[RMDB]
RNA sequence: GGGAACGACUCGAGUAGAGUCGAAAACCCAUCCGACCCGUCUUGAAACACGGACCAAGGAGUCUGACAUGCGUGCGAGUCGACGGGUUCUGAAACCUGGGAUGCGCAAGGAAGCUGACGAGCGGGACCCAUACCUAUAGUUCGCUAUAGGUAUGGGAAAAGAAACAACAACAACAAC
Reactivity to 2A3 in 0.01 (KOAc 150mM, MgCl2 10mM, bicine 150mM(pH8.5), 24C), signal-to-noise 9, nucleotides 027 to 126: c000c000c000a010u060c040c060g060a070c010c010c010g050u090c060u040u130g070a050a070a020c080a030c070g030g010a020c010c000a160a180g210g020a140g070u010c020u030g050a060c020a110u160g040c030g010u030g020c020g040a030g050u030c010g020a080c010g010g020g000u020u000c030u070g090a060a020a010c000c020u030g020g040g000a050u070g010c020g000c020a020a040g070g050a080a040g020c050u050g010a030c020g010a030g030c010g010g000g030a030
Reactivity to DMS in 0.01 (KOAc 150mM, MgCl2 10mM, bicine 150mM(pH8.5), 24C), signal-to-noise 6, nucleotides 027 to 126: c000c000c000a170u030c070c070g010a100c010c000c000g010u020c000u000u010g010a130a130a140c210a110c040g010g000a030c030c030a190a120g030g010a130g020u010c010u000g000a130c110a070u020g010c020g030u010g000c030g010a190g020u010c030g000a060c010g000g000g000u000u000c060u020g010a070a040a050c020c030u000g000g000g000a020u000g010c020g010c010a050a080g010g000a170a070g010c040u000g000a100c060g000a060g000c030g010g000g010a260